[RMDB]
RNA sequence: GGGAACGACUCGAGUAGAGUCGAAAAAAAAAGAUAUGGAGGCAAUCUUCUUCAACAGCUUAGCGUAACAUCUAUCGGAAACGAUAGUGGCUAAGACAUGAAGGAGAUUGCCUCCUAAGUCAAAAAAGAAUAUUUCUUAGUUCGCUAAGAAAUAUUCAAAAGAAACAACAACAACAAC
Reactivity to DMS in 0.01 (KOAc 150mM, MgCl2 10mM, bicine 150mM(pH8.5), 24C), signal-to-noise 2, nucleotides 027 to 126: a040a020a030a110a110g010a040u000a300u000g030g010a000g050g020c000a000a000u000c000u000u000c020u000u000c000a020a070c300a260g010c010u000u000a010g000c010g010u020a080a090c180a010u000c000u010a010u010c010g040g000a150a120a180c010g010a010u010a010g040u000g010g000c010u010a020a000g000a030c110a090u000g010a020a010g000g000a000g000a000u000u020g000c000c000u000c010c010u010a010a080g000u010c000a010a050a060a090a140a100